Chemical mapping of a 177-nucleotide RNA with DMS and 2A3. The reactions ran in a buffer of 150 mM KOAc, 10 mM MgCl2 and 150 mM bicine (pH 8.5), at 24 C. 2A3 adducts were read by reverse transcription with SuperScript II with manganese.
RNA sequence: GGGAACGACUCGAGUAGAGUCGAAAAUCAAACGAUUUCGAUCGUUUGAAACGGACCACUCCUGCGGGAGUUAAGGCCAUACGGACAGCCGGGACCACUGCCAGUCAUUCGGUUUCGACCGAAUGAAACUGCACACUAUUUUCGAAUAGUGUGCAGUAAAAGAAACAACAACAACAAC
Reactivity to DMS in 0.01 (KOAc 150mM, MgCl2 10mM, bicine 150mM(pH8.5), 24C), signal-to-noise 5, nucleotides 027 to 126: u000c000a000a010a000c000g010a010u000u000u010c190g010a020u000c000g010u010u000u000g000a010a110a100c170g000g010a110c030c040a100c020u000c010c010u000g030c170g020g010g000a030g010u000u000a050a090g020g000c010c030a070u010a100c110g000g000a100c100a090g000c010c020g000g000g010a110c040c020a100c100u000g010c040c040a120g000u010c000a010u000u000c000g010g010u000u000u010c180g010a030c010c010g010a010a000u000g000a010a050
Reactivity to 2A3 in 0.01 (KOAc 150mM, MgCl2 10mM, bicine 150mM(pH8.5), 24C), signal-to-noise 4, nucleotides 027 to 126: u020c000a010a000a000c010g010a010u060u070u180c230g100a020u000c010g000u000u010u010g000a010a000a010c060g020g000a030c010c010a010c010u010c010c010u040g020c270g070g000g000a010g010u010u110a070a030g020g000c010c000a040u080a080c040g020g030a020c020a010g020c030c000g020g010g020a000c010c000a030c050u050g020c040c010a020g080u010c000a000u010u000c000g020g000u040u030u100c180g090a030c000c000g000a000a000u000g000a020a040